An RNA of 177 nucleotides, treated with DMS and 2A3 and read out base by base. The DMS profile rests on 2,955 reads.

[RMDB]
RNA sequence: GGGAACGACUCGAGUAGAGUCGAAAACAUUACCAAAACCUGCACAUAUAAAGAAUGUAUCCAAGAUGUGUGCAUAAAGCUCCCAGGUAAGUGACAGUAUCUAUGGACUCAUUCAUUGGUAUAGAAGCUUAAGAGAGGUGUUCGCACCUCUCUUAAGAAAAGAAACAACAACAACAAC
Reactivity to DMS in 0.01 (KOAc 150mM, MgCl2 10mM, bicine 150mM(pH8.5), 24C), signal-to-noise 4, nucleotides 027 to 126: c120a110u010u000a070c010c030a080a060a090a120c200c210u000g000c030a030c030a030u000a040u010a070a190a180g000a050a070u010g010u000a090u000c030c030a060a070g010a050u000g000u010g010u000g020c000a030u000a040a060a100g000c060u000c020c020c040a090g000g000u000a020a090g010u000g000a080c100a120g000u000a030u000c050u000a060u000g020g000a040c180u000c050a050u010u010c030a090u000u000g000g010u000a040u000a070g010a140a190g010
Reactivity to 2A3 in 0.01 (KOAc 150mM, MgCl2 10mM, bicine 150mM(pH8.5), 24C), signal-to-noise 3, nucleotides 027 to 126: c010a090u070u140a040c010c000a020a040a030a070c030c010u060g040c040a040c010a060u160a010u060a070a140a060g050a050a030u140g050u150a090u010c020c010a050a020g030a100u010g010u010g020u040g050c000a020u140a030a030a000g030c020u030c040c010c020a010g020g010u060a090a060g030u020g100a000c030a040g060u060a010u010c010u020a160u080g040g010a030c040u020c080a030u070u010c030a030u030u080g020g000u040a040u030a090g140a160a010g060

For 2A3, 2,460 sequencing reads were counted.